[RMDB]
RNA sequence: GGGAACGACUCGAGUAGAGUCGAAAAUGGAAGACGCUAUAUCAAAAUACCAGUCUCCAGUUAAUAUAUUUAAACUAGCUAGUGAGUACGGAUUAAACAUACCCAACUAUUUAGAAAUUGAAAUAGAGGAAGACACAUUAUUUGACGAUGAGUUAUAGAUUCCUUAGGUAUUCGUACCUAAGGAAUCAAAAGAAACAACAACAACAAC
Reactivity to 2A3 in 0.01 (KOAc 150mM, MgCl2 10mM, bicine 150mM(pH8.5), 24C), signal-to-noise 3, nucleotides 027 to 156: u090g010g000a120a040g040a030c010g000c060u060a010u020a020u270c110a040a100a140a070u090a140c030c010a000g000u020c000u000c000c000a010g020u040u050a030a070u060a070u070a110u150u180u160a090a120a030c010u030a000g070c010u010a020g010u010g130a020g010u050a070c050g020g010a020u020u180a050a060a000c030a010u080a080c000c010c000a020a010c020u020a050u050u060u020a100g030a070a170a050u070u150g020a010a050a010u070a030g030a020g030g080a010a010g050a010c010a010c000a060u070u110a090u130u130u100g050a020c030g000a010u080g030a020g050u070u060a090u050a090
Reactivity to DMS in 0.01 (KOAc 150mM, MgCl2 10mM, bicine 150mM(pH8.5), 24C), signal-to-noise 2, nucleotides 027 to 156: u010g010g030a120a100g000a080c050g000c050u030a100u000a190u000c030a100a140a120a220u010a100c020c090a230g010u000c010u010c000c000a120g040u000u000a090a080u000a080u000a050u010u000u010a130a050a270c030u020a080g010c050u000a070g020u010g010a040g030u000a010c010g030g030a180u000u010a080a100a110c050a070u000a070c000c010c020a130a110c030u000a020u010u000u000a090g010a040a040a090u010u000g000a040a070a050u020a070g000a130g020g020a060a020g010a050c030a060c050a050u010u030a160u000u000u000g030a060c030g010a070u000g000a070g020u000u000a100u000a140
Structure probing data (2A3 and DMS) for a 207-nucleotide construct.
Values cover nucleotides 27 to 156.
The 2A3 profile rests on 1,575 reads.
For DMS, 2,434 sequencing reads were counted.